RNA sequence: GGGAACGACUCGAGUAGAGUCGAAAAGAUAUGGACGUACGUUGAUCGAUCGGAUCGGAAACGAUCCAAUCGGGAGUCACGUCCUAAGUCAAACUGGCGGUACUCCGUUCGCGGAGUACCGCCAGAAGAUAAGAGCAAGGUUCGCCUUGCUCUUAUCAAAAGAAACAACAACAACAAC
Reactivity to DMS in 0.01 (KOAc 150mM, MgCl2 10mM, bicine 150mM(pH8.5), 24C), signal-to-noise 3, nucleotides 027 to 126: g010a050u000a300u010g000g000a010c000g030u000a010c020g010u000u020g020a080u000c020g000a010u000c060g000g010a000u000c000g010g010a100a080a220c010g000a010u000c000c000a010a010u000c000g000g000g000a050g010u000c200a010c000g000u000c000c000u000a020a080g000u000c030a080a150a240c000u000g000g010c000g010g000u000a010c000u000c000c000g040u000u010c240g020c030g020g020a030g020u000a010c000c010g000c000c000a000g000a000a040
Reactivity to 2A3 in 0.01 (KOAc 150mM, MgCl2 10mM, bicine 150mM(pH8.5), 24C), signal-to-noise 2, nucleotides 027 to 126: g020a020u070a060u170g000g000a000c020g000u030a000c060g170u240u070g060a050u060c000g010a010u010c040g000g000a000u000c030g000g020a090a090a010c010g010a000u000c000c070a010a000u010c000g000g020g010a000g000u040c100a000c030g010u000c020c010u040a130a030g040u020c030a000a020a130c010u020g000g020c040g010g030u000a010c000u050c060c000g060u100u050c300g020c030g220g020a000g040u000a010c030c000g010c010c010a000g000a010a000
Structure probing data (DMS and 2A3) for a 177-nucleotide construct. It was measured as part of the RMDB library TTRDEL. The reactions ran in a buffer of 150 mM KOAc, 10 mM MgCl2 and 150 mM bicine (pH 8.5), at 24 C. The DMS profile rests on 4,246 reads.